The record gives the reactivity of an RNA of 207 nucleotides to 2A3. The reactions ran in a buffer of 150 mM KOAc, 10 mM MgCl2 and 150 mM bicine (pH 8.5), at 24 C. For 2A3 the reverse transcriptase was SuperScript II with manganese. For 2A3, 858 sequencing reads were counted.
RNA sequence: GGGAACGACUCGAGUAGAGUCGAAAACUACUAAAAUAAUAAAUACGAUCGCUGUAGCAGCACAUAGUUUACAGGUAGUGCUGCUACAACGCUGCUGCUCUCGCCUAGCCAUCGUAAAAGAUAGCAAGGCACAUGCUUCUGCUAAUUUUAUGUAUAGCCAGUCAUAUGGUUUCGACCAUAUGACUGGAAAAGAAACAACAACAACAAC
Reactivity to 2A3 in 0.01 (KOAc 150mM, MgCl2 10mM, bicine 150mM(pH8.5), 24C), signal-to-noise 2, nucleotides 027 to 156: c040u190a020c040u130a090a090a110a130u200a150a110u130a180a070a120u120a050c050g050a090u110c020g000c060u020g000u000a000g010c000a000g070c030a000c010a030u240a050g160u150u260u220a100c110a090g130g120u170a050g010u030g000c000u000g000c010u010a000c000a010a000c000g010c010u100g010c010u040g040c010u010c030u040c070g040c000c010u010a000g000c000c030a020u030c030g000u010a020a090a010a030g110a100u050a010g000c020a020a060g030g100c030a030c050a080u210g020c000u020u110c080u050g060c020u020a040a150u070u030u000u110a090u180g150u040a110u100a040g080